[RMDB]
RNA sequence: GGGAACGACUCGAGUAGAGUCGAAAAGAUAUGGAUUAGGCUAGAAGCAUAGCAGAGUCGGAAACGACGACGAAGCUAUGGCUUCUUGGACCCUAAUCCUAAGUCAAAACGUAGGUUCGCCUACGAACAGGAGAGUAUGGUUCGCCAUACUCUCCUGAAAAGAAACAACAACAACAAC
Reactivity to 2A3 in 0.01 (KOAc 150mM, MgCl2 10mM, bicine 150mM(pH8.5), 24C), signal-to-noise 2, nucleotides 027 to 126: g050a020u080a060u120g010g000a010u000u010a000g000g020c010u030a000g010a010a000g040c000a010u020a010g000c030a000g020a010g050u000c020g040g050a300a270a180c210g300a090c020g030a010c010g000a050a000g000c000u000a000u000g000g020c000u010u000c000u010u050g000g070a060c030c010c000u010a000a000u000c000c000u000a070a030g090u000c020a000a010a090a170c010g000u000a010g080g000u050u070c260g110c030c010u000a020c010g010a070a050
Reactivity to DMS in 0.01 (KOAc 150mM, MgCl2 10mM, bicine 150mM(pH8.5), 24C), signal-to-noise 4, nucleotides 027 to 126: g020a050u000a300u010g000g010a020u000u000a000g010g000c060u000a020g010a000a030g020c000a000u010a000g040c000a040g000a300g000u000c000g000g000a160a160a090c260g000a130c000g020a030c020g010a300a180g010c010u000a000u000g020g020c010u000u000c000u010u000g020g010a060c300c000c000u020a020a010u010c000c000u000a020a110g000u000c030a140a040a120a130c040g050u000a000g000g000u000u020c300g010c000c000u000a010c020g020a050a090
Conditions: 150 mM KOAc, 10 mM MgCl2 and 150 mM bicine (pH 8.5), 24 C. This 177-nucleotide RNA was probed chemically with 2A3 and DMS. For DMS, 2,219 sequencing reads were counted. Values cover nucleotides 27 to 126. The 2A3 profile rests on 3,948 reads.